[RMDB]
RNA sequence: GGGAACGACUCGAGUAGAGUCGAAAAGAUAUGGAUCCGUAUCAGCCGAUAAGCGUAUGUCGGAAACGACAUAACGCUUUUGACGGCUUUUACGGAUCCUAAGUCAAACCUACCCUUCGGGGUAGGAGUAACAUUAGGACUUCGGUCCUAAUGUUACAAAAGAAACAACAACAACAAC
Reactivity to DMS in 0.01 (KOAc 150mM, MgCl2 10mM, bicine 150mM(pH8.5), 24C), signal-to-noise 5, nucleotides 027 to 126: g000a020u000a300u000g000g010a010u000c000c000g020u000a000u000c030a000g020c000c000g010a180u000a020a020g020c010g030u000a010u000g000u000c000g000g000a110a060a220c000g010a010c000a000u000a060a050c000g010c000u000u000u000u000g010a210c130g010g010c000u000u000u000u000a000c000g000g000a000u000c000c000u000a000a080g010u000c030a090a110a200c000c000u010a010c000c000c020u000u020c210g050g000g010g000u000a000g000g010a050
Reactivity to 2A3 in 0.01 (KOAc 150mM, MgCl2 10mM, bicine 150mM(pH8.5), 24C), signal-to-noise 3, nucleotides 027 to 126: g020a010u050a030u140g000g000a000u000c010c000g010u010a000u020c020a000g020c000c030g150a170u080a200a000g010c010g000u010a000u010g000u010c000g020g040a070a040a030c010g000a000c000a010u030a220a130c010g010c000u020u000u020u000g050a020c030g000g000c000u000u010u000u000a000c010g050g000a000u000c000c000u000a000a000g000u000c010a010a020a070c000c000u010a000c020c000c000u030u100c300g110g000g000g000u000a010g000g010a030